Source information: The data come from the RNA Mapping Database (RMDB), library TTRDES. Chemical mapping of a 177-nucleotide RNA with 2A3 and DMS. High DMS reactivity at an A or C suggests that its Watson-Crick edge is free. The RNA was probed in 150 mM KOAc, 10 mM MgCl2 and 150 mM bicine (pH 8.5) at 24 C. Values are in units of 0.01, from 0 to 300, in steps of 10. 2A3 adducts were read by reverse transcription with SuperScript II with manganese. The 2A3 profile rests on 30,148 reads.
RNA sequence: GGGAACGACUCGAGUAGAGUCGAAAAGAUAUGGAUCGGGACGGGAGCCUGAAGUCGGAAACGACUUUCAGGCGAAGAACGUCUUUCGAUCCUAAGUCAAAGUGCCUAGCCUUCGGGCUAGGCACAACAUGACAUAAUAGUUCGCUAUUAUGUCAUGAAAAGAAACAACAACAACAAC
Reactivity to 2A3 in 0.01 (KOAc 150mM, MgCl2 10mM, bicine 150mM(pH8.5), 24C), signal-to-noise 4, nucleotides 027 to 126: g000a000u020a000u050g000g010a000u000c010g010g010g010a000c010g010g030g060a100g000c000c010u010g010a010a000g000u010c000g000g000a030a010a000c000g000a010c000u090u140u150c040a000g000g000c000g000a010a000g020a010a000c010g000u000c000u080u110u080c010g000a000u000c010c000u000a010a000g000u000c040a130a070a130g020u010g010c000c000u010a010g010c020c010u040u140c300g040g000g000c000u000a000g000g000c000a000c000a000a000
Reactivity to DMS in 0.01 (KOAc 150mM, MgCl2 10mM, bicine 150mM(pH8.5), 24C), signal-to-noise 6, nucleotides 027 to 126: g000a010u000a060u000g000g000a010u000c000g000g010g000a020c000g000g000g010a070g030c000c000u010g000a020a010g010u000c000g020g000a020a020a050c000g010a010c000u000u010u010c000a000g010g020c000g000a040a100g000a150a200c010g010u000c000u000u010u010c010g000a010u000c000c000u000a000a060g000u000c010a100a150a150g010u000g010c010c000u000a000g010c000c000u000u020c270g030g010g010c000u000a000g000g010c000a000c010a010a100